[RMDB]
Conditions: 150 mM KOAc, 10 mM MgCl2 and 150 mM bicine (pH 8.5), 24 C. Chemical mapping of a 207-nucleotide RNA with 2A3.
RNA sequence: GGGAACGACUCGAGUAGAGUCGAAAAUGUAUGGUGUAUUCGUACACCAUACAAAAGAUAUGGAACCACUACGGGAGCUCGUGUUCGGAAACGAACACAGAGCAUCGAUCGUAGGUGGUUCCUAAGUCAAAGCGUUAGAGUGUUCGCACUCUAACGCGUAUCCCGUGGAGUUCGCUCCACGGGAUACAAAAGAAACAACAACAACAAC
Reactivity to 2A3 in 0.01 (KOAc 150mM, MgCl2 10mM, bicine 150mM(pH8.5), 24C), signal-to-noise 2, nucleotides 027 to 156: u110g000u010a010u010g000g000u000g010u000a020u030u090c170g020u010a000c000a000c000c010a000u000a000c000a000a040a000a010g000a000u010a000u030g000g000a000a000c000c030a000c010u010a000c010g120g020g080a140g020c010u000c000g020u000g010u000u010c010g010g000a010a010a010c000g000a010a000c000a000c030a050g000a000g010c010a080u130c100g100a140u030c000g000u000a040g110g080u000g020g000u000u000c010c000u000a000a000g000u010c030a170a170a030g010c000g000u000u000a000g000a000g000u010g040u090u180c280g050c090a000c010u000c000u000a000a000c000g000c000

Overview:
For 2A3 the reverse transcriptase was SuperScript II with manganese.